Conditions: 150 mM KOAc, 10 mM MgCl2 and 150 mM bicine (pH 8.5), 24 C. The record gives the reactivity of an RNA of 177 nucleotides to DMS and 2A3. The 2A3 profile rests on 6,917 reads. 2A3 adducts were read by reverse transcription with SuperScript II with manganese.

RNA sequence: GGGAACGACUCGAGUAGAGUCGAAAAGGAAAGCACAUGAAGCACGCGAAGCACGGCAAGCACAUGAAGCACUACAAGCAGUACAAGCAGCGCAACCAGUAGAAGCAGCCGAAGCAGUACAAAAAAAACUACAUAUCUUGUUCGCAAGAUAUGUAGUAAAAGAAACAACAACAACAAC
Reactivity to DMS in 0.01 (KOAc 150mM, MgCl2 10mM, bicine 150mM(pH8.5), 24C), signal-to-noise 5, nucleotides 027 to 126: g030g000a080a050a080g010c040a090c090a030u010g000a080a070g020c040a050c070g020c070g030a070a070g000c070a060c100g010g010c060a040a120g030c040a060c060a060u000g010a070a110g020c020a060c070u000a060c110a070a060g010c060a030g010u010a030c090a060a080g010c040a040g020c060g010c050a050a070c050c020a060g020u000a040g010a070a100g010c040a060g010c020c020g020a060a060g010c040a050g010u000a040c080a000a000a000a050a030a060a040
Reactivity to 2A3 in 0.01 (KOAc 150mM, MgCl2 10mM, bicine 150mM(pH8.5), 24C), signal-to-noise 3, nucleotides 027 to 126: g030g010a110a070a000g010c020a030c010a060u090g050a060a020g000c030a010c060g040c020g050a050a010g060c040a010c050g030g000c030a040a010g000c010a010c000a080u080g060a040a010g010c020a000c070u100a050c020a060a030g010c020a010g050u070a040c010a090a030g000c020a000g000c020g020c030a000a050c020c000a010g030u050a020g040a070a000g000c030a000g040c010c020g020a030a010g000c020a010g040u060a050c000a060a020a070a000a000a000a010